[RMDB]
Annotation:
Chemical mapping of a 177-nucleotide RNA with 2A3 and DMS. The reactions ran in a buffer of 150 mM KOAc, 10 mM MgCl2 and 150 mM bicine (pH 8.5), at 24 C. For 2A3, 7,517 sequencing reads were counted.
RNA sequence: GGGAACGACUCGAGUAGAGUCGAAAAGUCCUGGUAUCUAUUAUGAGUUUAUUUACAACCACUGGGUCGAUGCCACUGCUGGUGGAGAUUUAUUUCCCCGAUGGUAUCACCAGCCCAGUAGUCAGCACAUAGAUAAGUACUUCGGUACUUAUCUAUGAAAAGAAACAACAACAACAAC
Reactivity to 2A3 in 0.01 (KOAc 150mM, MgCl2 10mM, bicine 150mM(pH8.5), 24C), signal-to-noise 7, nucleotides 027 to 126: g050u030c010c000u010g090g040u110a130u070c070u050a150u240u090a130u300g060a060g080u110u160u080a150u070u220u080a070c030a050a030c010c020a010c010u000g010g010g030u080c040g000a010u010g010c000c000a030c090u130g060c090u160g050g090u170g110g000a030g000a000u030u190u200a130u040u160u030c020c000c000c000g030a030u020g000g010u010a010u020c000a010c050c020a010g000c010c000c000a010g000u020a020g030u040c040a010g060c050a010
Reactivity to DMS in 0.01 (KOAc 150mM, MgCl2 10mM, bicine 150mM(pH8.5), 24C), signal-to-noise 7, nucleotides 027 to 126: g000u000c010c010u000g020g010u000a050u000c060u010a060u010u000a090u000g000a130g010u000u010u000a050u010u010u000a070c100a140a060c030c040a030c010u000g000g000g010u000c130g010a020u000g000c010c010a020c140u010g020c110u010g040g020u010g030g010a020g010a040u000u010u000a070u010u000u000c000c000c000c020g010a100u000g000g010u000a020u000c010a040c090c220a170g000c020c010c010a020g010u000a020g010u000c100a090g010c200a160